[RMDB]
Chemical mapping of a 177-nucleotide RNA with 2A3 and DMS. For DMS the reverse transcriptase was MarathonRT. The RNA was probed in 150 mM KOAc, 10 mM MgCl2 and 150 mM bicine (pH 8.5) at 24 C. The DMS profile rests on 1,055 reads.

RNA sequence: GGGAACGACUCGAGUAGAGUCGAAAACGUGAAGAAUAAACGAAUUCUGUAUUUUGAUUGUGUCUGUGCCGUGGACGUAGUGAAAGGAACGUCGCGCGGGAUGCUUUUCAUGGUUUACACGUCGCAGCUCGUAGCGAGGUUUCGACCUCGCUACGAGAAAAGAAACAACAACAACAAC
Reactivity to 2A3 in 0.01 (KOAc 150mM, MgCl2 10mM, bicine 150mM(pH8.5), 24C), signal-to-noise 1, nucleotides 027 to 126: c010g030u070g040a040a090g090a110a000u060a030a200a070c100g060a110a100u120u010c010u030g100u200a250u050u190u070u100g100a130u040u170g000u020g020u000c060u020g110u070g050c040c000g030u010g020g000a000c030g000u140a050g040u080g120a000a040a040g070g030a030a130c000g060u030c010g000c040g000c030g070g000g040a010u000g000c000u000u000u010u050c040a040u000g040g000u030u000u100a010c030a000c010g040u060c090g000c020a020g020
Reactivity to DMS in 0.01 (KOAc 150mM, MgCl2 10mM, bicine 150mM(pH8.5), 24C), signal-to-noise 1, nucleotides 027 to 126: c110g030u000g030a120a070g010a050a080u020a070a090a150c150g020a150a060u000u010c000u000g010u000a140u030u010u000u000g010a080u000u000g000u010g010u000c010u010g020u000g020c050c020g050u000g010g000a020c060g020u010a100g010u010g000a080a040a080g000g000a110a130c040g040u000c000g000c100g000c150g020g000g000a030u020g000c000u000u000u000u000c030a020u000g000g000u000u000u000a150c000a030c000g000u000c040g020c040a020g000